An RNA of 177 nucleotides, treated with 2A3 and DMS and read out base by base. Reactivities are given for positions 27 through 126. Conditions: 150 mM KOAc, 10 mM MgCl2 and 150 mM bicine (pH 8.5), 24 C. DMS adducts were read by reverse transcription with MarathonRT. It was measured as part of the RMDB library RFMREP.
RNA sequence: GGGAACGACUCGAGUAGAGUCGAAAACUGGGUUCGCCCAGAGGCACAUAGGCGAUGAUUUGACUCCGGAAAAGCUGAGCGAUGAUGAAGUCCAGCCCGAAUGAGCGCCCCCGGUGUUCGCACCGAAGAAACUUGACUAAUUCGUUAGUCAAGUUUCAAAAGAAACAACAACAACAAC
Reactivity to 2A3 in 0.01 (KOAc 150mM, MgCl2 10mM, bicine 150mM(pH8.5), 24C), signal-to-noise 2, nucleotides 027 to 126: c010u030g020g000g030u080u050c120g100c050c000c010a030g090a080g050g000c040a020c010a130u140a070g060g000c040g090a110u110g030a050u060u050u120g060a090c000u000c030c040g030g060a120a130a040a030g060c060u050g040a030g050c040g030a070u140g010a070u070g070a160a000g030u000c000c010a000g010c000c000c010g040a060a110u130g010a030g000c020g050c010c000c000c020c000g020g000u010g010u020u050c120g000c060a020c010c010g010a050a020
Reactivity to DMS in 0.01 (KOAc 150mM, MgCl2 10mM, bicine 150mM(pH8.5), 24C), signal-to-noise 3, nucleotides 027 to 126: c020u010g010g000g000u010u010c150g010c000c020c030a030g000a080g030g010c050a070c070a060u010a120g010g000c040g020a050u000g010a110u010u000u010g010a090c050u010c020c040g000g010a100a060a120a130g010c030u010g000a100g000c030g010a080u010g020a150u010g010a080a140g010u000c040c050a070g040c010c020c030g010a110a090u010g000a050g010c030g000c080c010c010c040c000g010g010u010g010u000u010c140g000c010a010c000c030g020a100a080